[RMDB]
RNA sequence: GGGAACGACUCGAGUAGAGUCGAAAAGAUAUGGACCUGAAUAUGCUAUAUGCGCUUCGAUAAGCUCAGUAUCGGAAACGAUACGAGCUUUUGACGAAGCGCAUAUAGCAUAUCAGGUCCUAAGUCAUCCUAUUACAAUGUUCGCAUUGUAAUAGGAAAAAGAAACAACAACAACAAC
Reactivity to DMS in 0.01 (KOAc 150mM, MgCl2 10mM, bicine 150mM(pH8.5), 24C), signal-to-noise 4, nucleotides 027 to 126: g000a050u010a300u010g010g010a010c000c000u000g000a060a060u000a000u000g010c000u010a010u000a010u000g010c010g020c000u010u000c000g010a190u000a010a000g010c000u000c000a130g040u000a000u000c000g010g010a120a130a220c000g010a010u000a000c000g000a010g010c000u000u000u010u010g010a210c180g000a010a010g010c010g000c000a000u000a000u000a000g000c000a000u000a000u000c010a000g010g000u000c000c000u000a000a060g020u000c010a170